[RMDB]
RNA sequence: GGGAACGACUCGAGUAGAGUCGAAAACGGCGCGCCGAUCGCGUAGCUAGCCGUAAUGCAUUACGAUUAAUCGCGAUAUCGGCUAUAAUGCGCGCCGUAGCAUUAGCGCGCCGCGAUAUCGGCUACGGGUCACGCGCAUAUUCGUAUGCGCGUGACCAAAAGAAACAACAACAACAAC
Reactivity to DMS in 0.01 (KOAc 150mM, MgCl2 10mM, bicine 150mM(pH8.5), 24C), signal-to-noise 2, nucleotides 027 to 126: c060g000g000c030g060c110g040c010c040g020a120u000c020g000c000g000u010a050g000c190u020a010g030c020c000g010u000a080a090u020g050c200a040u010u000a070c250g000a200u020u000a070a080u010c080g010c000g010a060u010a080u000c010g010g010c010u000a010u010a160a140u000g000c020g010c100g020c150c000g000u010a040g020c060a100u010u000a070g000c050g000c040g020c090c000g010c000g030a080u030a070u000c000g000g020c010u000a050c100g010
Reactivity to 2A3 in 0.01 (KOAc 150mM, MgCl2 10mM, bicine 150mM(pH8.5), 24C), signal-to-noise 2, nucleotides 027 to 126: c010g020g000c020g000c010g020c030c030g000a090u070c010g000c000g040u000a020g030c040u020a000g000c000c000g040u000a020a020u180g030c100a080u000u070a050c080g280a080u080u160a120a050u120c140g000c030g000a000u010a040u140c000g010g000c000u030a040u000a040a040u030g000c010g000c000g000c000c010g000u010a000g000c020a170u060u120a010g000c040g000c000g000c010c010g010c000g020a050u070a080u120c050g040g020c010u060a030c000g000